[RMDB]
RNA sequence: GGGAACGACUCGAGUAGAGUCGAAAAGAUAUGGACAGGCGAUGUGCGAAGAACUCCGUAACAUCUCGGAAACGAGUGGGAGGGAGCAUAAGCCUGUCCUAAGUCAAAAGAGGCGUUCGCGCCUCAACCACAGUAUAGGGUUCGCCCUAUACUGUGGAAAAGAAACAACAACAACAAC
Reactivity to 2A3 in 0.01 (KOAc 150mM, MgCl2 10mM, bicine 150mM(pH8.5), 24C), signal-to-noise 3, nucleotides 027 to 126: g000a010u010a000u040g010g010a000c000a010g010g020c020g070a170u300g050u000g030c030g210a300a020g010a040a050c000u020c000c020g030u030a040a050c050a210u170c010u010c010g020g000a010a030a010c000g000a000g020u090g060g000g010a020g000g010g000a040g000c010a020u010a010a000g000c010c000u000g000u000c000c000u000a000a000g010u000c010a020a000a020a170g000a000g020g000c030g040u090u140c240g040c020g000c170c000u000c000a000a010
Reactivity to DMS in 0.01 (KOAc 150mM, MgCl2 10mM, bicine 150mM(pH8.5), 24C), signal-to-noise 5, nucleotides 027 to 126: g000a020u010a110u010g000g000a010c010a010g020g000c010g020a060u020g040u000g010c010g020a090a120g000a130a200c000u000c000c010g020u010a110a180c180a040u010c010u010c000g030g000a030a040a070c010g000a010g030u000g000g010g000a030g000g000g000a050g020c000a010u000a130a300g010c010c000u000g010u010c010c000u000a000a060g000u010c030a110a050a120a100g000a020g010g010c010g040u010u010c220g030c010g010c000c000u000c000a030a070

This 177-nucleotide RNA was probed chemically with 2A3 and DMS. 2A3 adducts were read by reverse transcription with SuperScript II with manganese. Source: RMDB library TTRDEL, as collected in RNAgym. The 2A3 profile rests on 6,527 reads. High 2A3 reactivity points to a flexible backbone, as in loops and unpaired stretches. The DMS profile rests on 6,663 reads.